[RMDB]
RNA sequence: GGGAACGACUCGAGUAGAGUCGAAAAGGGACCUUGCAAACAUUUUCCUUCCACUGAGUGGUCCACAGGAGGAAACAAUGAAAACUUCUCUCUCCUUUGGGAGGCCAAGGCGGGCAGAUCACAAGGUCAGGAGAUCGAGACCAUCCUGGCUAACAUAGUACCAUGAUUUAUUCGUAAAUCAUGGUACAAAAGAAACAACAACAACAAC
Reactivity to DMS in 0.01 (KOAc 150mM, MgCl2 10mM, bicine 150mM(pH8.5), 24C), signal-to-noise 2, nucleotides 027 to 156: g000g020g020a060c080c060u000u000g020c030a100a070a150c040a180u000u010u000u010c000c020u000u000c030c030a150c080u000g000a130g010u000g040g010u000c000c030a090c050a100g000g000a060g010g010a090a050a100c100a080a070u000g000a080a090a090a100c070u000u000c020u000c040u000c000u000c020c020u000u020u010g010g020g040a110g030g030c060c030a040a010g030g020c070g030g030g010c010a070g020a040u000c040a070c060a080a120g000g020u000c010a050g000g010a060g020a080u000c070g000a160g010a070c030c040a140u000c000c020u000g000g030c000u000a040a080c080a090u000a140
Reactivity to 2A3 in 0.01 (KOAc 150mM, MgCl2 10mM, bicine 150mM(pH8.5), 24C), signal-to-noise 6, nucleotides 027 to 156: g040g000g010a040c020c030u040u120g060c080a080a130a090c040a150u070u060u030u070c020c000u050u010c010c010a080c070u060g020a040g100u050g010g020u030c010c010a010c020a010g010g020a020g010g040a030a070a060c090a070a150u180g090a080a050a060a070c100u130u020c030u000c010u000c000u010c040c000u030u050u080g050g000g000a030g000g030c030c030a050a030g030g000c020g010g010g000c020a010g010a050u080c050a030c020a130a050g030g000u010c000a010g020g000a030g010a040u130c100g020a010g020a090c010c010a010u010c000c000u010g010g000c000u010a030a010c030a050u120a040
The record gives the reactivity of an RNA of 207 nucleotides to DMS and 2A3. For DMS, 5,086 sequencing reads were counted. Source: RMDB library OK3TST, as collected in RNAgym. The 2A3 profile rests on 6,523 reads. The reactions ran in a buffer of 150 mM KOAc, 10 mM MgCl2 and 150 mM bicine (pH 8.5), at 24 C. DMS adducts were read by reverse transcription with MarathonRT.